Source information
Chemical mapping of a 207-nucleotide RNA with DMS and 2A3. The DMS profile rests on 8,071 reads. Source: RMDB library OK3TST, as collected in RNAgym. The 2A3 profile rests on 5,227 reads.
[RMDB]
RNA sequence: GGGAACGACUCGAGUAGAGUCGAAAAAAUGAAAUCGUUGAUAUUGAUGUUGAUCGUCCGCGACAGCGAACAGACGUCACAUUCGGUGAAUAUGUUGAGCAGAUUCGAUCACUGAUCGGCGAGUAAACUGUCUCAGUUUCAUAUCUAAGCUCUGAGAGAAGUCUUAUCUUUUCGAAGAUAAGACUUCAAAAGAAACAACAACAACAAC
Reactivity to DMS in 0.01 (KOAc 150mM, MgCl2 10mM, bicine 150mM(pH8.5), 24C), signal-to-noise 4, nucleotides 027 to 156: a080a040u010g000a100a100a070u000c020g040u000u000g000a120u000a090u000u000g020a050u010g020u000u000g000a070u010c110g020u010c000c010g050c020g010a300c100a210g020c140g020a080a030c020a110g000a040c050g000u010c020a030c030a160u010u000c050g000g000u020g010a060a070u000a070u000g020u000u000g030a090g010c040a110g010a140u000u000c060g020a110u000c040a100c050u000g010a040u000c030g010g020c010g030a190g000u000a060a080a040c050u000g010u000c030u000c030a090g010u000u010u000c010a110u000a090u010c050u000a090a120g010c040u000c030u000g000a160g000a270
Reactivity to 2A3 in 0.01 (KOAc 150mM, MgCl2 10mM, bicine 150mM(pH8.5), 24C), signal-to-noise 7, nucleotides 027 to 156: a000a010u220g050a050a020a040u090c060g020u020u040g040a070u050a100u170u120g040a070u080g050u120u070g020a070u120c040g010u010c040c010g020c030g100a160c120a070g020c020g010a040a050c040a040g040a020c050g000u030c010a020c020a040u140u120c070g060g010u050g030a050a020u100a040u110g100u090u070g000a020g000c020a020g020a070u110u090c060g030a030u030c030a050c210u070g020a020u030c020g010g010c030g020a020g050u110a040a090a090c070u080g030u100c010u010c030a010g010u030u080u040c060a080u080a100u080c020u070a090a020g050c040u030c050u100g090a090g010a010